Source: RMDB library OK1LIB, as collected in RNAgym. This 177-nucleotide RNA was probed chemically with 2A3. Reactivities are given for positions 27 through 126. For 2A3, 313 sequencing reads were counted.

RNA sequence: GGGAACGACUCGAGUAGAGUCGAAAAGAUAUGUUUUUCCACCAUUUCAAAAAGCACGAGGAGGCUGUCAUUAGAUUUGGAACCAUCACGUCCCGCUUCAAAGACUGUGCUGCUUUGUCAACCAUGGGCUUCGUCAGGCGUUCGCGCCUGACGAAGCAAAAGAAACAACAACAACAAC
Reactivity to 2A3 in 0.01 (KOAc 150mM, MgCl2 10mM, bicine 150mM(pH8.5), 24C), signal-to-noise 1, nucleotides 027 to 126: g130a000u290a050u000g050u000u000u000u000u210c000c000a000c000c000a130u060u060u070c140a090a170a000a000a020g020c060a030c200g070a010g070g000a000g060g000c060u060g060u020c010a000u210u140a130g120a140u030u000u130g010g000a000a000c000c000a000u120c000a000c010g080u100c060c000c000g060c000u000u020c030a000a230a000g000a060c000u100g000u060g020c000u000g020c020u100u060u080g100u050c000a020a020c000c080a090u000g070g000